[RMDB]
RNA sequence: GGGAACGACUCGAGUAGAGUCGAAAAUCGAUGCCGCCGGCGGUGACGAUCAUGCCUUCGCCGGCGAUGAUCUCGGUGGCGGCGCCGAUAACGAUGUCGACGCCGGGCUGGAUGUCCGGGUUGCCGGGAUCGAUGUUUACUUCGGUAAACAUCGAUCAAAAGAAACAACAACAACAAC
Reactivity to 2A3 in 0.01 (KOAc 150mM, MgCl2 10mM, bicine 150mM(pH8.5), 24C), signal-to-noise 3, nucleotides 027 to 126: u000c000g010a000u040g040c010c010g000c000c000g090g100c040g000g130u180g140a080c130g000a010u070c030a030u080g020c000c010u100u050c100g080c130c020g000g000c010g000a000u000g000a000u000c000u000c000g300g210u010g010g000c000g000g000c000g000c000c000g000a000u030a060a040c060g110a160u280g060u170c010g010a010c100g050c090c030g000g000g000c000u110g260g110a120u220g030u000c000c000g000g000g020u020u030g000c000c000g060g040
Reactivity to DMS in 0.01 (KOAc 150mM, MgCl2 10mM, bicine 150mM(pH8.5), 24C), signal-to-noise 2, nucleotides 027 to 126: u020c010g000a040u020g000c020c010g020c010c000g000g000c010g000g030u020g030a080c110g010a030u040c110a070u000g010c040c010u000u000c300g000c150c160g000g020c000g000a010u010g000a000u000c010u000c010g000g020u020g000g000c000g000g010c000g000c020c000g000a030u000a090a160c180g010a100u020g020u010c010g000a030c040g000c000c000g000g040g010c010u000g010g010a120u010g010u000c000c000g000g000g000u000u000g020c040c020g010g020